An RNA of 207 nucleotides, treated with 2A3 and DMS and read out base by base. The RNA was probed in 150 mM KOAc, 10 mM MgCl2 and 150 mM bicine (pH 8.5) at 24 C. The 2A3 profile rests on 1,121 reads.
[RMDB]
RNA sequence: GGGAACGACUCGAGUAGAGUCGAAAAGGGUGAUGUCUCCUAACCAUUAUCAAUGGGGGCACUCGGUCGUGCUGUGGGUAGAAAUUUUAUUUCGUGCCUACCUUAGACGCUUGUCGUCGGGAGUAUGUGGGACUGAUGAACUUCGGUUCAUCAGUAAGGGAUACAGGUAGUUCGCUACCUGUAUCCCAAAAGAAACAACAACAACAAC
Reactivity to 2A3 in 0.01 (KOAc 150mM, MgCl2 10mM, bicine 150mM(pH8.5), 24C), signal-to-noise 3, nucleotides 027 to 156: g050g010g000u090g040a190u010g010u010c010u010c000c020u020a050a060c010c020a020u070u100a060u250c150a060a050u090g000g000g020g010g000c020a020c030u050c030g060g010u010c030g020u040g040c100u080g010u000g020g010g000u020a030g090a010a060a020u150u230u100u070a110u050u200u090c040g010u110g040c000c020u020a060c010c000u080u090a060g000a010c000g010c080u170u300g090u270c030g000u010c020g010g020g000a060g050u110a110u150g030u130g010g060g010a010c000u000g000a000u000g000a000a000c000u020u020c100g080g000u020u000c000a000u000c000a000g000u010a000a010
Reactivity to DMS in 0.01 (KOAc 150mM, MgCl2 10mM, bicine 150mM(pH8.5), 24C), signal-to-noise 1, nucleotides 027 to 156: g010g010g010u000g020a080u010g030u010c000u000c000c040u000a060a120c140c070a100u000u000a120u000c110a120a110u000g010g040g040g040g010c010a030c040u000c030g020g020u010c020g010u020g030c110u010g020u020g010g020g040u010a260g000a020a070a060u000u000u020u000a070u000u010u000c010g000u010g030c000c030u000a030c010c100u000u000a120g010a090c020g000c100u010u010g030u000c010g030u000c030g010g050g000a130g030u000a060u000g010u000g030g010g040a080c000u000g000a000u000g000a030a020c000u000u000c300g050g010u000u000c000a000u000c000a000g000u000a020a120